[RMDB]
RNA sequence: GGGAACGACUCGAGUAGAGUCGAAAAUUUCCUGAACAGUCAGUGGAGGAGGUCCUGGGAGCUCAGGUGAGCACCUGAACGGUAGGGCAGAGCCUGAGGGUCUUGGUGGAGACAGGCAAGAAGGUUGCAGGAACCUAGUCUGGCCCAGUGCCUGGGAAAUCGACUUUUAUUUCGAUAAAAGUCGAUUAAAAGAAACAACAACAACAAC
Reactivity to DMS in 0.01 (KOAc 150mM, MgCl2 10mM, bicine 150mM(pH8.5), 24C), signal-to-noise 1, nucleotides 027 to 156: u010u010u000c020c010u000g010a120a150c080a130g010u010c050a050g050u010g000g030a130g010g010a120g040g000u000c000c050u000g000g000g000a180g030c030u000c050a040g000g030u010g000a280g030c020a100c040c010u000g020a080a100c090g020g050u000a100g020g000g030c040a120g000a300g010c000c010u050g010a120g000g020g010u000c000u000u010g050g110u000g000g010a080g020a110c040a080g020g020c010a050a080g040a070a060g000g030u010u000g040c040a210g020g020a050a030c020c040u000a110g000u000c030u000g010g000c030c000c020a100g000u000g000c020c020u000g040g000g000a060
An RNA of 207 nucleotides, treated with DMS and read out base by base. DMS (dimethyl sulfate) methylates the pairing face of unpaired adenines and cytosines. Reactivities are given for positions 27 through 156. The reactions ran in a buffer of 150 mM KOAc, 10 mM MgCl2 and 150 mM bicine (pH 8.5), at 24 C.